[RMDB]
RNA sequence: GGGAACGACUCGAGUAGAGUCGAAAAAACCGCACGGUGUUUGCCACCAAGUUCGCCCAGCACAAGUUCCUGUUCUCCCGGGAGAUCGGCUCGGAGUCGAAGGUGUUGAUCCAUCGCGACCCGAAGGGGCCGUGUCAAACUUCGGUUUGACACGGCCAAAAGAAACAACAACAACAAC
Reactivity to 2A3 in 0.01 (KOAc 150mM, MgCl2 10mM, bicine 150mM(pH8.5), 24C), signal-to-noise 2, nucleotides 027 to 126: a010a010c040c020g010c030a020c070g020g000u010g030u100u060u160g080c020c000a000c000c000a010a020g090u030u090c030g000c000c000c000a000g000c010a060c020a100a080g020u050u040c000c000u010g080u030u020c000u010c000c000c000g020g010g000a070g010a040u070c070g040g000c050u010c010g030g040a120g030u040c030g050a110a060g050g000u020g000u060u160g060a080u020c000c000a000u020c030g010c020g040a010c000c000c020g020a070a070g080g000
Reactivity to DMS in 0.01 (KOAc 150mM, MgCl2 10mM, bicine 150mM(pH8.5), 24C), signal-to-noise 1, nucleotides 027 to 126: a010a030c090c010g010c030a030c030g030g000u010g000u000u050u040g050c100c010a010c040c040a080a060g030u010u000c020g040c000c040c060a100g000c050a060c120a130a040g010u000u000c010c000u000g000u000u000c030u000c010c020c000g020g000g020a100g010a040u020c030g000g000c060u010c030g000g000a090g010u000c020g000a070a120g010g000u010g020u000u020g000a160u040c100c030a050u000c010g010c030g000a080c010c000c000g000a040a130g030g020